[RMDB]
RNA sequence: GGGAACGACUCGAGUAGAGUCGAAAAACGGGCAGUGGCGAUGGCAACGCGGCAGCCGCAGGGUCGACUUCUUCGCAGCCGCAACAGACGGGUAACGGGCAAAGAGGGGCACUCGUUCUGUUGGAAGGAGUCCAUUUAUUUUCGAAUAAAUGGACUCAAAAGAAACAACAACAACAAC
Reactivity to DMS in 0.01 (KOAc 150mM, MgCl2 10mM, bicine 150mM(pH8.5), 24C), signal-to-noise 4, nucleotides 027 to 126: a100c080g020g010g000c040a050g020u020g000g000c050g000a080u020g010g010c060a040a100c110g000c050g000g010c060a070g040c060c030g020c080a070g000g010g000u000c060g000a070c090u000u000c050u000u000c050g000c120a110g010c060c020g020c040a050a030c020a020g000a050c050g000g000g000u000a050a100c100g020g000g000c060a040a060a110g010a090g000g000g010g030c140a050c020u010c020g000u020u000c010u000g020u000u000g000g000a080a070g000
Reactivity to 2A3 in 0.01 (KOAc 150mM, MgCl2 10mM, bicine 150mM(pH8.5), 24C), signal-to-noise 9, nucleotides 027 to 126: a010c040g010g020g010c020a040g020u050g080g020c040g040a080u060g070g000c030a040a040c060g000c010g060g010c020a020g030c020c020g020c020a030g030g000g020u050c010g030a050c020u050u030c010u040u030c050g000c060a030g020c010c020g030c010a010a010c010a010g030a020c010g030g000g000u040a120a020c030g030g050g010c060a080a100a010g070a050g020g010g020g000c020a010c020u010c000g040u140u020c020u010g020u010u010g020g010a050a040g100